[RMDB]
This 177-nucleotide RNA was probed chemically with 2A3 and DMS.
For 2A3 the reverse transcriptase was SuperScript II with manganese.
The RNA was probed in 150 mM KOAc, 10 mM MgCl2 and 150 mM bicine (pH 8.5) at 24 C.
For DMS, 3,072 sequencing reads were counted.
The 2A3 profile rests on 3,539 reads.

RNA sequence: GGGAACGACUCGAGUAGAGUCGAAAAAAAGAUAUGGAGCCACUACCCACCACUCAUGGUGGCAACAGCAGAGCUCGGAAACGAGCUCUGACAUGCCGAGAGUGAGUGAGGUGGCUCCUAAGUCAAAGAAUAUUACAUCCUUCGGGAUGUAAUAUUCAAAAGAAACAACAACAACAAC
Reactivity to 2A3 in 0.01 (KOAc 150mM, MgCl2 10mM, bicine 150mM(pH8.5), 24C), signal-to-noise 3, nucleotides 027 to 126: a000a010a010g190a070u250a150u170g030g010a000g000c010c010a020c000u130a190c010c000c000a020c000c000a010c020u040c010a050u190g100g180u220g280g000c020a030a030c050a070g060c000a000g020a000g020c000u040c000g000g000a070a070a030c000g000a010g030c000u000c000u010g000a010c000a010u050g030c010c010g300a300g010a000g270u020g000a030g010u000g010a020g000g000u000g000g010c010u000c000c000u000a030a010g050u040c060a190a050a030
Reactivity to DMS in 0.01 (KOAc 150mM, MgCl2 10mM, bicine 150mM(pH8.5), 24C), signal-to-noise 3, nucleotides 027 to 126: a080a060a090g000a100u000a260u010g010g010a020g000c000c000a010c000u010a130c080c020c000a300c040c000a000c020u000c010a050u010g010g040u010g010g020c010a010a060c280a120g010c000a000g000a010g010c000u000c000g000g000a060a060a190c010g020a000g000c010u000c000u000g000a010c040a150u000g010c010c000g000a140g030a300g000u000g000a040g000u010g000a080g010g010u000g000g000c000u000c000c010u000a000a040g010u000c120a090a100a180